Source: RMDB library OK1LIB, as collected in RNAgym. This 177-nucleotide RNA was probed chemically with 2A3. The RNA was probed in 150 mM KOAc, 10 mM MgCl2 and 150 mM bicine (pH 8.5) at 24 C.
RNA sequence: GGGAACGACUCGAGUAGAGUCGAAAAUUCUAACUCUACUUGAGUUUCCGAUUCUUGGUUAAUAGAAGUAUCAUUUUCUUCUCUUACUUCCUGUUGCUCAUUUUUUUUAUCCAAGACUUUACACCUCCGACCUAGGUACUUUCGAGUACCUAGGUCGAAAAGAAACAACAACAACAAC
Reactivity to 2A3 in 0.01 (KOAc 150mM, MgCl2 10mM, bicine 150mM(pH8.5), 24C), signal-to-noise 4, nucleotides 027 to 126: u170u020c040u070a050a010c000u000c000u000a000c000u000u000g010a000g000u030u000u000c010c000g010a090u030u030c000u010u040g040g000u010u080a040a030u040a160g080a080a030g040u050a070u110c070a110u160u120u180u070c050u060u010c010u000c000u040u040a040c000u040u050c000c050u080g020u180u090g050c060u030c130a180u020u010u030u000u000u030u050u000a050u020c020c010a010a010g000a010c010u140u070u090a110c110a080c100c020u160c050